[RMDB]
RNA sequence: GGGAACGACUCGAGUAGAGUCGAAAAGAUAUGGACCUGCAGUAGGAGGUACAUUUCCCUAGUGCCUAUGGUCGGAAACGACCAUAGGCACUAGCAAUGUACUACCCACCCUACAAGGUCCUAAGUCGGAAACACUAUUGUUCGCAAUAGUGUUUCCAAAAGAAACAACAACAACAAC
Reactivity to DMS in 0.01 (KOAc 150mM, MgCl2 10mM, bicine 150mM(pH8.5), 24C), signal-to-noise 2, nucleotides 027 to 126: g000a110u010a300u000g010g020a010c020c000u000g000c300a240g020u000a010g000g000a250g000g000u000a000c000a000u000u000u000c300c300c000u000a000g020u000g020c000c000u000a010u000g020g000u020c010g050g000a170a090a280c000g020a020c000c000a000u000a000g040g000c000a000c000u000a000g080c070a000a040u000g010u000a000c000u000a070c040c050c190a300c100c000c000u000a000c010a230a020g000g020u000c000c000u010a000a040g020u000c160